This 177-nucleotide RNA was probed chemically with 2A3 and DMS. 2A3 adducts were read by reverse transcription with SuperScript II with manganese. The RNA was probed in 150 mM KOAc, 10 mM MgCl2 and 150 mM bicine (pH 8.5) at 24 C. The 2A3 profile rests on 9,713 reads.
[RMDB]
RNA sequence: GGGAACGACUCGAGUAGAGUCGAAAACCUCUGGGGCACAACUGGUUGAGAGCUGGGCCGCUCUCCUAAUGAGCCCAUGGCAAAGCGAAACCAGUGUGGUACGGUAUGGCGAGGUUUGCCUCGGAGUCAAUUAGUAACUCUUCGGAGUUACUAAUUGAAAAGAAACAACAACAACAAC
Reactivity to 2A3 in 0.01 (KOAc 150mM, MgCl2 10mM, bicine 150mM(pH8.5), 24C), signal-to-noise 6, nucleotides 027 to 126: c000c000u000c030u010g000g000g030g020c010a020c010a110a110c030u010g000g030u040u030g060a100g000a020g070c000u050g010g280g000c010c010g000c020u010c010u020c000c030u290a220a110u170g010a010g020c020c050c050a110u170g010g000c130a040a040a030g030c010g040a070a010a010c000c000a010g010u020g080u040g080g090u090a060c050g020g090u200a150u210g120g060c040g040a040g020g060u050u120u120g030c000c000u000c010g000g010a020g040u010
Reactivity to DMS in 0.01 (KOAc 150mM, MgCl2 10mM, bicine 150mM(pH8.5), 24C), signal-to-noise 5, nucleotides 027 to 126: c040c000u000c010u010g020g000g000g030c010a070c080a130a060c020u010g000g010u000u000g010a100g000a120g010c010u000g010g020g020c020c020g000c030u000c010u000c130c110u010a060a050u010g000a290g010c040c160c070a060u020g010g010c040a020a080a090g000c010g000a100a080a020c010c010a020g030u010g010u000g010g020u010a080c050g000g020u000a100u010g020g010c040g000a130g000g010u010u010u000g010c010c000u000c020g000g000a060g000u010